[RMDB]
RNA sequence: GGGAACGACUCGAGUAGAGUCGAAAAGCUUCCGUCGAACGCGAAAGUCGGACGGCGGCCAUGAGUCGCAACGCAAAGCCGCGGCAAGUGGCGUUAGCGAGAAGAGACUAGGCUUUGGUUUCUUCAAAUUAGUGAGUGUGGUUCGCCACACUCACAACUACAACUUCAACUUCGGUUGAAGUUGUAGAAAAGAAACAACAACAACAAC
Reactivity to DMS in 0.01 (KOAc 150mM, MgCl2 10mM, bicine 150mM(pH8.5), 24C), signal-to-noise 1, nucleotides 027 to 156: g010c000u000u000c000c000g070u000c010g000a010a090c100g010c040g000a190a100a210g020u000c020g010g000a170c030g010g020c110g000g060c020c030a010u000g000a300g060u000c000g040c050a090a090c040g000c000a150a140a240g070c010c010g020c020g040g000c100a030a290g050u000g000g010c020g090u000u000a120g060c020g020a050g050a030a050g000a120g000a040c020u000a040g060g020c060u000u010u000g000g000u010u000u000c000u000u010c020a020a040a170u000u000a150g030u010g020a020g000u010g030u000g020g000u000u010c130g010c020c000a000c000a000c010u000c050a000c000a000a120
Reactivity to 2A3 in 0.01 (KOAc 150mM, MgCl2 10mM, bicine 150mM(pH8.5), 24C), signal-to-noise 3, nucleotides 027 to 156: g000c000u040u030c020c000g000u000c000g030a080a040c010g020c020g150a250a050a100g240u300c020g000g000a010c000g000g000c000g010g000c020c050a140u150g000a010g040u020c000g010c040a080a040c050g000c040a060a090a040g030c000c010g000c020g040g030c110a170a070g000u030g030g000c010g030u120u120a020g000c030g050a020g020a130a010g060a000g010a020c010u020a020g030g000c010u000u040u050g050g010u020u000u000c000u030u030c010a060a120a210u150u080a080g000u000g010a000g000u000g000u010g030g070u040u090c250g010c050c000a000c000a000c000u020c010a000c000a000a000
An RNA of 207 nucleotides, treated with DMS and 2A3 and read out base by base. For 2A3, 1,991 sequencing reads were counted. Values are in units of 0.01, from 0 to 300, in steps of 10. Values cover nucleotides 27 to 156.